[RMDB]
RNA sequence: GGGAACGACUCGAGUAGAGUCGAAAAAGAGGCUACGAGGAAAGAUAUCCUGAGUACCAUGCGUCAUUAUUCGCGUGGGAAUAUGGGUGGCAUGAACAUCCAACCCUAAAUAUUACUCAAGUCCGAUACUUAACACGUUGUUCGCAACGUGUUAAGUAAAAGAAACAACAACAACAAC
Reactivity to 2A3 in 0.01 (KOAc 150mM, MgCl2 10mM, bicine 150mM(pH8.5), 24C), signal-to-noise 8, nucleotides 027 to 126: a010g140a030g000g000c000u020a010c140g040a020g030g060a090a060a040g110a060u100a050u100c020c040u060g010a010g000u010a020c000c000a000u010g000c000g020u060c090a200u050u300a120u240u130c000g000c010g000u000g010g010g090a020a030u140a160u070g000g010g000u020g010g010c050a070u160g070a070a020c030a040u030c000c010a040a160c050c000c010u040a080a070a020u160a050u110u080a050c020u020c040a040a000g030u000c000c020g000a010u010
Reactivity to DMS in 0.01 (KOAc 150mM, MgCl2 10mM, bicine 150mM(pH8.5), 24C), signal-to-noise 3, nucleotides 027 to 126: a070g010a090g020g010c020u010a060c110g000a070g010g000a080a070a070g030a090u040a060u020c040c020u000g000a050g000u050a110c030c050a010u000g010c000g010u010c190a170u050u030a190u010u030c000g000c020g060u000g000g000g000a090a060u030a080u030g000g000g020u010g020g000c130a150u000g010a110a040c110a100u030c020c010a040a200c020c000c000u010a050a060a060u010a030u000u000a070c010u020c030a060a120g000u010c020c020g020a300u020
Structure probing data (2A3 and DMS) for a 177-nucleotide construct. Values cover nucleotides 27 to 126.